This 177-nucleotide RNA was probed chemically with DMS and 2A3.
It was measured as part of the RMDB library OK2TRN.
[RMDB]
RNA sequence: GGGAACGACUCGAGUAGAGUCGAAAAGAGUUUUCUAGAACUAUAUUCAAAGCUUUUCAUGGUGAGGUGACAGUGCCAUGGAUGGAUGCAGGGGCCACCUUUCUGAAAACAAAAACAGGGAUGAUGCCUAUGUAUGUCACUUCGGUGACAUACAUAGAAAAGAAACAACAACAACAAC
Reactivity to DMS in 0.01 (KOAc 150mM, MgCl2 10mM, bicine 150mM(pH8.5), 24C), signal-to-noise 4, nucleotides 027 to 126: g000a120g010u000u000u000u010c080u030a120g010a080a100c080u010a100u010a190u010u010c090a080a130a100g010c040u000u010u000u000c020a020u010g010g010u000g000a140g010g010u020g010a100c080a090g010u010g000c010c010a050u000g010g010a040u000g000g010a070u000g000c080a080g000g020g010g010c050c040a050c050c040u000u010u010c020u000g010a050a030a070a060c130a050a060a060a060a070c130a060g000g000g010a050u010g000a080u010g000c140
Reactivity to 2A3 in 0.01 (KOAc 150mM, MgCl2 10mM, bicine 150mM(pH8.5), 24C), signal-to-noise 3, nucleotides 027 to 126: g060a010g000u050u110u040u090c090u150a070g050a070a020c030u040a070u070a100u300u220c100a080a070a150g090c030u090u050u060u030c030a040u080g000g000u030g020a060g000g020u050g050a040c040a040g080u040g050c020c000a010u040g070g000a040u040g030g040a020u100g040c050a020g040g000g020g010c020c000a040c030c000u040u080u010c020u010g020a070a060a050a050c090a000a060a020a020a000c020a000g080g000g000a030u060g020a010u140g020c010
Background
For 2A3, 2,481 sequencing reads were counted. As a SHAPE reagent, 2A3 marks flexible, mostly unpaired nucleotides at the ribose 2'-OH. DMS adducts were read by reverse transcription with MarathonRT.